[RMDB]
RNA sequence: GGGAACGACUCGAGUAGAGUCGAAAAAUAGAGAUUGGAGUCAUACAACCCCAGAAACCAUUCCUUAUACCUUGAGUAUUGCUGAAUUCAGUUUAGCGUGCAUGCUCUUGGCUAUUCUCAUAGGGAUAAAAUCUGUAGUCCUUCGGGACUACAGAAAGUAGUUGGGGAUGUUCGCAUCCCCAACUACAAAAGAAACAACAACAACAAC
Reactivity to 2A3 in 0.01 (KOAc 150mM, MgCl2 10mM, bicine 150mM(pH8.5), 24C), signal-to-noise 1, nucleotides 027 to 156: a000u190a020g060a000g020a000u050u050g010g010a070g140u120c040a040u190a200c080a150a160c060c040c000c090a070g130a020a040a040c010c010a030u000u020c000c000u030u060a000u070a090c000c000u000u050g000a000g030u000a040u240u080g010c050u000g110a250a160u130u190c060a080g110u030u060u130a040g070c100g010u010g000c020a000u000g000c000u020c000u010u000g010g010c000u060a050u200u000c080u000c010a030u090a030g000g000g010a030u080a060a190a000a020u000c000u000g000u000a020g020u000c030c000u060u040c200g100g000g000a030c000u000a000c000a000g010a000a010a000
Source: RMDB library M2RFPK, as collected in RNAgym. The record gives the reactivity of an RNA of 207 nucleotides to 2A3. Values cover nucleotides 27 to 156. For 2A3 the reverse transcriptase was SuperScript II with manganese. The RNA was probed in 150 mM KOAc, 10 mM MgCl2 and 150 mM bicine (pH 8.5) at 24 C. Reactivities are rounded to 0.1 and cut off at 0 and 3.